[RMDB]
RNA sequence: GGGAACGACUCGAGUAGAGUCGAAAAGGAGAAGGGAGCUCAGGCCGGCCUGUAGGUGAGGAAUGCCUGAACACCCUGGGCCAGAUCUUUAUCUCGACUGUAAAGACAAUGUUUCCUGACCAGCUGGCCCGAGUCCUUAUUUCGAUAAGGACUCGGGAAAAGAAACAACAACAACAAC
Reactivity to 2A3 in 0.01 (KOAc 150mM, MgCl2 10mM, bicine 150mM(pH8.5), 24C), signal-to-noise 3, nucleotides 027 to 126: g100g000a060g030a050a070g010g000g000a040g010c010u000c010a000g000g000c020c040g030g080c040c020u140g070u220a150g010g150u210g100a030g000g030a070a090u050g030c000c020u000g000a020a010c020a080c000c000c000u000g010g000g000c000c000a010g010a110u000c000u060u040u060a140u070c040u010c040g080a080c080u100g040u140a000a100a000g030a030c050a020a110u080g020u020u040u040c000c020u020g050a060c000c010a020g030c020u040g030g010
Reactivity to DMS in 0.01 (KOAc 150mM, MgCl2 10mM, bicine 150mM(pH8.5), 24C), signal-to-noise 1, nucleotides 027 to 126: g060g030a000g000a150a070g000g000g000a090g040c030u000c000a000g000g020c000c160g020g060c000c000u010g010u060a150g000g020u080g000a030g000g000a050a010u000g000c020c000u020g000a010a140c000a130c060c000c000u000g010g000g000c000c030a000g020a130u000c000u000u040u040a010u000c070u000c150g020a120c140u010g000u050a070a040a060g030a070c040a070a090u000g030u010u010u030c000c020u000g000a230c000c000a050g010c000u000g000g000

Conditions: 150 mM KOAc, 10 mM MgCl2 and 150 mM bicine (pH 8.5), 24 C.
This 177-nucleotide RNA was probed chemically with 2A3 and DMS.
Source: RMDB library RFM100, as collected in RNAgym.